Description:
This 177-nucleotide RNA was probed chemically with 2A3 and DMS. For 2A3, 3,728 sequencing reads were counted. Conditions: 150 mM KOAc, 10 mM MgCl2 and 150 mM bicine (pH 8.5), 24 C. The DMS profile rests on 2,810 reads. It was measured as part of the RMDB library OK1LIB. 2A3 adducts were read by reverse transcription with SuperScript II with manganese.
[RMDB]
RNA sequence: GGGAACGACUCGAGUAGAGUCGAAAAAAAUCCCUUAUGAGAAUUACAAGAUAGGAGCUGAUAGUCUAAAUUUCUUUUUAGGUCCUGUCACAGUAGUACUUGCAGUUCCACUUUAUAAACAAUUUGACAUUUUAGGGUAGUUCGCUACCCUAAAAUGAAAAGAAACAACAACAACAAC
Reactivity to 2A3 in 0.01 (KOAc 150mM, MgCl2 10mM, bicine 150mM(pH8.5), 24C), signal-to-noise 6, nucleotides 027 to 126: a000a000a010u090c030c000c040u040u090a220u090g080a060g040a050a050u100u060a040c010a020a040g090a120u100a030g090g040a050g030c050u010g010a040u040a020g020u010c020u050a070a070a120u130u200u250c080u090u120u020u010u020a030g060g030u050c010c000u010g040u050c010a000c020a040g060u120a000g020u020a030c010u030u050g030c010a020g010u020u000c010c010a050c090u130u140u050a170u230a120a180a050c090a080a130u040u040u120g070a040
Reactivity to DMS in 0.01 (KOAc 150mM, MgCl2 10mM, bicine 150mM(pH8.5), 24C), signal-to-noise 2, nucleotides 027 to 126: a070a040a190u020c040c000c000u040u040a030u030g010a060g030a120a010u010u000a020c030a070a080g000a110u010a020g000g000a070g030c100u010g000a020u000a040g000u040c070u010a040a070a170u010u020u020c030u020u000u000u000u000a000g000g010u000c110c000u000g010u020c000a050c090a150g000u000a050g020u030a040c020u000u000g000c130a060g000u000u000c010c000a060c190u010u050u030a050u020a100a100a120c120a060a150u000u010u000g000a290